This 177-nucleotide RNA was probed chemically with DMS. For DMS the reverse transcriptase was MarathonRT.
[RMDB]
RNA sequence: GGGAACGACUCGAGUAGAGUCGAAAAAUAGUCUGAUGUCAAAAGCCAUUCCACCCUUAUUGGAACGGCCAGGUAUGGGUAAAUUGCAGCACCAUAGACCAUUGGUAACGUUGCUCUGAAUGAUGUAUGAACGGACAUAGUUCGCUAUGUCCGUUCAAAAAGAAACAACAACAACAAC
Reactivity to DMS in 0.01 (KOAc 150mM, MgCl2 10mM, bicine 150mM(pH8.5), 24C), signal-to-noise 2, nucleotides 027 to 126: a060u000a120g020u000c060u010g000a080u000g000u000c090a060a130a200a170g010c020c040a050u000u000c040c030a040c110c070c110u000u010a100u000u000g010g010a030a010c080g000g000c010c060a070g050g030u000a050u010g010g010g000u000a060a050a100u010u000g000c070a090g030c100a080c030c040a040u010a050g010a100c090c070a050u000u000g000g010u000a070a080c070g020u000u000g020c020u010c050u000g010a110a060u010g020a070u000g010u000a190